[RMDB]
RNA sequence: GGGAACGACUCGAGUAGAGUCGAAAAGACGCGCGGUUCGCCGCGCGUCAAAGAAAAAAUGGCCAUUUUGGUCAGGGCCAACUGUUGCCUGAAGAAGGGUAAAAAGUAUGGGGCUUCGGCCCCAUACCAUAAUGGUGUCGUUCGCGACACCAUUAUGAAAAGAAACAACAACAACAAC
Reactivity to DMS in 0.01 (KOAc 150mM, MgCl2 10mM, bicine 150mM(pH8.5), 24C), signal-to-noise 1, nucleotides 027 to 126: g040a010c000g000c020g060c000g020g000u000u020c230g000c020c020g000c010g070c000g000u000c000a010a040a170g000a000a040a060a020a100a080u000g000g010c000c000a140u000u010u010u020g030g010u000c030a030g000g000g000c070c030a120a110c210u000g000u000u000g000c010c010u000g000a090a070g020a060a100g010g000g000u010a050a090a040a140a080g020u000a010u000g010g000g000g010c000u000u000c160g000g000c010c000c000c000a000u000a000c020
Chemical mapping of a 177-nucleotide RNA with DMS.
The RNA was probed in 150 mM KOAc, 10 mM MgCl2 and 150 mM bicine (pH 8.5) at 24 C.
It was measured as part of the RMDB library RFMREP.
For DMS the reverse transcriptase was MarathonRT.
Reactivities are given for positions 27 through 126.